[RMDB]
RNA sequence: GGGAACGACUCGAGUAGAGUCGAAAAACGUGAAUCGCCACACGUUAAAAAAGGCAGUCAUGCUGGCAGACUCAGGAGCAUCCUUGAUGGAUGGCUUGGGUGGAUAAGCUGGGAACCAAAGGGGUCGGUUGUGUAAUUAGUUCGCUAAUUACACAACAAAAGAAACAACAACAACAAC
Reactivity to 2A3 in 0.01 (KOAc 150mM, MgCl2 10mM, bicine 150mM(pH8.5), 24C), signal-to-noise 5, nucleotides 027 to 126: a010c000g000u010g020a070a130u080c070g000c010c010a010c000a000c020g100u150u150a000a060a000a040a010a020g020g000c010a000g070u060c020a020u150g020c010u020g040g020c020a010g020a050c000u000c020a020g010g040a060g180c010a020u010c010c000u110u150g170a150u290g030g000a010u000g010g030c010u010u010g010g010g000u040g000g010a050u040a050a020g000c030u020g000g020g020a020a030c030c020a120a080a020g010g020g020g020u060c070g070
Reactivity to DMS in 0.01 (KOAc 150mM, MgCl2 10mM, bicine 150mM(pH8.5), 24C), signal-to-noise 5, nucleotides 027 to 126: a020c010g020u000g010a070a140u010c120g020c010c020a060c000a000c010g010u000u010a010a020a020a030a040a170g030g040c010a040g020u000c080a050u010g010c030u000g010g000c070a190g010a040c020u000c030a030g000g000a060g020c010a010u000c010c000u000u000g010a140u000g010g010a020u000g010g000c010u000u000g000g010g010u000g000g010a120u030a050a050g020c040u010g000g000g010a060a080c090c080a030a070a100g010g000g000g010u000c110g010
About this RNA: An RNA of 177 nucleotides, treated with 2A3 and DMS and read out base by base. Values cover nucleotides 27 to 126. For 2A3, 10,867 sequencing reads were counted. In probing experiments dimethyl sulfate is read out at A N1 and C N3, which are open when not base-paired. The RNA was probed in 150 mM KOAc, 10 mM MgCl2 and 150 mM bicine (pH 8.5) at 24 C.